[RMDB]
RNA sequence: GGGAACGACUCGAGUAGAGUCGAAAACUAGAAACGUCUCCGACCUGGGGCUGUUCAUUAAAAGUAAACAGCAGCUUUCUGACAACCAGAGGCAGAUAUCUGAUGCUAUCGCUGCUGCAAGCAUCGAGUAUUUAAUACCGUUCGCGGUAUUAAAUACAAAAGAAACAACAACAACAAC
Reactivity to 2A3 in 0.01 (KOAc 150mM, MgCl2 10mM, bicine 150mM(pH8.5), 24C), signal-to-noise 4, nucleotides 027 to 126: c000u030a050g080a020a150a010c020g010u000c040u030c060c040g250a300c020c060u100g010g040g020g000c020u030g030u030u030c050a070u090u280a100a080a040a060g070u060a050a040a050c010a010g020c000a010g000c010u080u200u070c050u090g060a100c040a070a070c110c010a020g000a040g090g000c060a040g050a090u090a070u090c090u100g010a020u030g010c010u030a030u180c050g000c020u070g000c030u040g020c050a030a030g010c000a020u050c030g020a020
Reactivity to DMS in 0.01 (KOAc 150mM, MgCl2 10mM, bicine 150mM(pH8.5), 24C), signal-to-noise 5, nucleotides 027 to 126: c030u000a080g010a100a100a100c120g010u000c010u010c030c030g020a130c120c070u000g010g000g010g020c020u000g000u000u000c090a100u010u010a050a070a130a160g010u010a050a090a070c020a010g020c010a040g010c030u010u010u000c070u010g010a100c090a060a090c130c030a050g000a050g010g010c100a050g000a070u000a080u020c050u010g000a060u000g000c020u010a070u000c140g000c020u000g010c050u010g000c060a080a140g000c030a020u000c030g020a150